[RMDB]
This 177-nucleotide RNA was probed chemically with DMS and 2A3.
The data come from the RNA Mapping Database (RMDB), library OK2TRN.
2A3 is a SHAPE reagent: it acylates the 2'-hydroxyl of flexible nucleotides of all four kinds.
The reactions ran in a buffer of 150 mM KOAc, 10 mM MgCl2 and 150 mM bicine (pH 8.5), at 24 C.
For 2A3 the reverse transcriptase was SuperScript II with manganese.

RNA sequence: GGGAACGACUCGAGUAGAGUCGAAAAGACAGGCUACCAUGCUACUACUGACUUAGCGAAGCCUCUGAUGGUAAUUUCUGGUUUCCAACAGCAAUUCACUGACAGUAUUGGAGUAUGACCCCACCAACACCUCAGUCCUGUUCGCAGGACUGAGGUGAAAAGAAACAACAACAACAAC
Reactivity to DMS in 0.01 (KOAc 150mM, MgCl2 10mM, bicine 150mM(pH8.5), 24C), signal-to-noise 1, nucleotides 027 to 126: g000a100c140a060g010g030c060u010a100c090c040a060u000g010c000u000a000c130u030a040c090u000g000a200c160u000u030a070g020c040g030a070a110g000c130c080u030c100u000g010a160u010g000g000u000a010a010u000u000u000c100u000g010g000u000u000u030c030c030a000a100c040a040g010c160a020a130u000u000c040a100c020u010g000a090c010a030g030u000a080u000u000g040g030a140g000u000a110u000g010a110c060c010c010c060a040c140c080a060a060
Reactivity to 2A3 in 0.01 (KOAc 150mM, MgCl2 10mM, bicine 150mM(pH8.5), 24C), signal-to-noise 1, nucleotides 027 to 126: g030a010c060a010g030g040c020u100a130c010c020a070u050g020c050u030a010c000u030a030c030u020g070a050c010u070u030a010g000c020g130a040a020g000c000c060u040c070u080g030a080u080g000g060u100a090a090u010u070u160c060u120g130g000u060u080u000c000c000a010a040c000a080g040c000a000a150u020u070c060a060c030u080g030a010c060a010g020u030a050u120u120g020g000a020g010u080a130u100g100a130c030c020c000c000a000c000c010a000a040